[RMDB]
RNA sequence: GGGAACGACUCGAGUAGAGUCGAAAAUCGCUGGAGAUGAGUGUGCCUACUUCACUGUCACCAUCACAGGUGGGGGGCCAGGUGGGCCUCGGAGGCACAGGGGAAGGUGCCCCUGCUCCCACUGGAAAAGGUUAACUGGGUUCGCCCAGUUAACCUUAAAAGAAACAACAACAACAAC
Reactivity to DMS in 0.01 (KOAc 150mM, MgCl2 10mM, bicine 150mM(pH8.5), 24C), signal-to-noise 1, nucleotides 027 to 126: u030c090g000c020u010g000g010a170g000a010u010g000a060g020u020g010u000g000c040c000u020a030c100u000u000c110a060c010u000g000u000c000a060c000c020a040u000c210a120c150a140g010g010u000g010g030g010g020g020g010c100c130a090g000g000u020g000g020g020c110c050u000c060g000g000a040g000g050c030a170c040a020g000g060g020g000a110a140g040g000u000g030c010c000c000c010u000g030c190u010c000c010c000a080c110u020g000g000a050a040
Conditions: 150 mM KOAc, 10 mM MgCl2 and 150 mM bicine (pH 8.5), 24 C. Chemical mapping of a 177-nucleotide RNA with DMS. The DMS profile rests on 933 reads.